[RMDB]
RNA sequence: GGGAACGACUCGAGUAGAGUCGAAAAGAUAUGGAGCGACUAGUAGCAUGGCGUUUGACGUCGGAAACGACCGAGCCAUGAACUACUACGAAUCGCUCCUAAGUCAAAAGCAUACUUCGGUAUGCAAGGUGUGGGUAAUGUUCGCAUUACCCACACCAAAAGAAACAACAACAACAAC
Reactivity to 2A3 in 0.01 (KOAc 150mM, MgCl2 10mM, bicine 150mM(pH8.5), 24C), signal-to-noise 1, nucleotides 027 to 126: g000a000u070a030u050g000g000a010g000c000g030a000c010u000a010g020u000a010g060c020a000u000g050g000c110g060u120u300u170g070a150c070g000u040c040g020g040a110a100a090c000g010a000c030c010g020a020g020c020c010a000u020g010a000a030c000u080a000c020u010a030c030g070a140a100u000c000g000c010u030c000c000u000a020a000g000u000c000a000a000a000a220g000c010a000u020a000c010u000u040c210g070g000u020a010u000g000c010a000a030
Reactivity to DMS in 0.01 (KOAc 150mM, MgCl2 10mM, bicine 150mM(pH8.5), 24C), signal-to-noise 1, nucleotides 027 to 126: g020a010u000a300u010g010g000a070g080c000g010a020c010u040a100g020u000a010g000c010a020u010g000g010c000g030u000u040u010g000a150c300g010u000c000g010g000a110a010a250c000g040a010c010c040g000a090g000c000c010a010u000g000a140a030c040u010a190c000u000a040c060g000a050a120u000c000g060c010u000c000c000u010a010a090g030u010c090a050a110a090a040g020c000a020u000a000c000u000u040c150g010g010u000a010u000g000c030a020a010